[RMDB]
RNA sequence: GGGAACGACUCGAGUAGAGUCGAAAAUUGGCUACGUUCGGGAGGGAUAACCGCUGAAAGCAUCUAAGCGGGAAGCCUGCUUCGAGAUGAGGACUCCCACCCACUUGAUGGGGUAAGGCUCCCAGUAGCACAAGGAUUAAUUCGUUAAUCCUUGUGCAAAAGAAACAACAACAACAAC
Reactivity to DMS in 0.01 (KOAc 150mM, MgCl2 10mM, bicine 150mM(pH8.5), 24C), signal-to-noise 7, nucleotides 027 to 126: u000u010g010g010c040u000a090c100g010u010u000c080g010g010g000a150g010g010g000a040u000a150a230c030c010g020c010u010g000a140a120a160g020c150a070u000c060u010a160a040g010c010g000g000g010a080a100g000c010c000u000g010c040u000u000c040g010a060g000a120u010g000a110g000g010a220c080u000c010c000c020a200c010c000c020a050c060u010u000g000a090u000g000g000g000g020u010a050a080g010g000c050u010c010c010c010a120g010u010a080
Reactivity to 2A3 in 0.01 (KOAc 150mM, MgCl2 10mM, bicine 150mM(pH8.5), 24C), signal-to-noise 5, nucleotides 027 to 126: u070u060g030g000c020u040a030c070g070u050u080c060g010g020g010a020g000g020g000a020u020a050a080c010c010g000c020u020g060a080a070a020g090c030a070u050c050u080a040a010g000c000g010g020g000a010a030g030c000c000u020g040c020u050u040c030g130a140g060a150u150g040a100g030g040a060c020u020c000c010c010a050c000c010c000a040c030u100u190g050a190u070g160g000g000g020u030a050a050g030g000c010u030c000c010c020a050g070u090a020